[RMDB]
RNA sequence: GGGAACGACUCGAGUAGAGUCGAAAAGAAGUGGCAGGGACAUGCCCCAUAAGCUCGUUCUAGCAACAUAUGUUUGGCUAGUUCGAGCGAUUAGUCUAGAGGAGCGUCCUCUCGCCUCUUCACGAGAGCCAGGAGCACGGUUCGCCGUGCUCCUGGCAAAAGAAACAACAACAACAAC
Reactivity to 2A3 in 0.01 (KOAc 150mM, MgCl2 10mM, bicine 150mM(pH8.5), 24C), signal-to-noise 1, nucleotides 027 to 126: g000a000a000g070u000g050g000c000a000g000g000g020a010c060a140u190g000c100c060c000c140a020u070a110a000g000c000u040c000g000u000u000c000u000a000g000c020a040a040c000a080u220a180u300g220u120u140u160g220g020c000u000a000g000u000u040c000g000a000g000c000g000a000u000u050a000g000u030c070u000a000g090a110g090g000a040g030c000g000u020c000c000u070c000u030c000g000c000c000u000c010u000u000c000a040c050g070a000g000a000

The record gives the reactivity of an RNA of 177 nucleotides to 2A3. For 2A3 the reverse transcriptase was SuperScript II with manganese. Conditions: 150 mM KOAc, 10 mM MgCl2 and 150 mM bicine (pH 8.5), 24 C. For 2A3, 455 sequencing reads were counted.